[RMDB]
RNA sequence: GGGAACGACUCGAGUAGAGUCGAAAACGGAGAUCGAGCGCCAGUUCGUGCGCGGAGGCCUGAAGUUGCGUCGGCUUCUUCUUGUUCGCGUCGUGCGUGGAACGGCUCCUUCUUCACACCACCCCGACUAGUCUAUAAUCUUCGGAUUAUAGACUAGAAAAGAAACAACAACAACAAC
Reactivity to DMS in 0.01 (KOAc 150mM, MgCl2 10mM, bicine 150mM(pH8.5), 24C), signal-to-noise 5, nucleotides 027 to 126: c240g010g010a020g010a020u000c140g000a030g010c000g000c190c010a020g000u000u000c020g000u000g010c000g020c010g000g010a210g000g000c010c020u000g000a010a010g020u000u000g000c030g020u010c300g010g010c000u000u010c010u000u000c010u000u000g000u010u000c030g010c120g020u000c010g020u000g010c000g010u000g000g000a020a010c030g000g000c000u000c010c020u000u000c000u000u000c010a110c140a190c060c040a300c040c000c000c020g020a250
Reactivity to 2A3 in 0.01 (KOAc 150mM, MgCl2 10mM, bicine 150mM(pH8.5), 24C), signal-to-noise 6, nucleotides 027 to 126: c080g000g010a010g000a010u010c010g000a000g010c010g070c120c000a030g010u010u010c010g010u020g000c020g010c010g010g010a040g030g010c010c010u010g000a010a010g010u020u020g020c080g170u240c200g300g040c000u010u000c000u010u000c000u030u050g100u180u110c050g010c090g160u090c010g010u020g000c010g020u040g010g000a010a000c000g010g000c000u000c000c000u010u000c000u010u000c000a020c010a020c000c020a060c000c010c000c000g040a070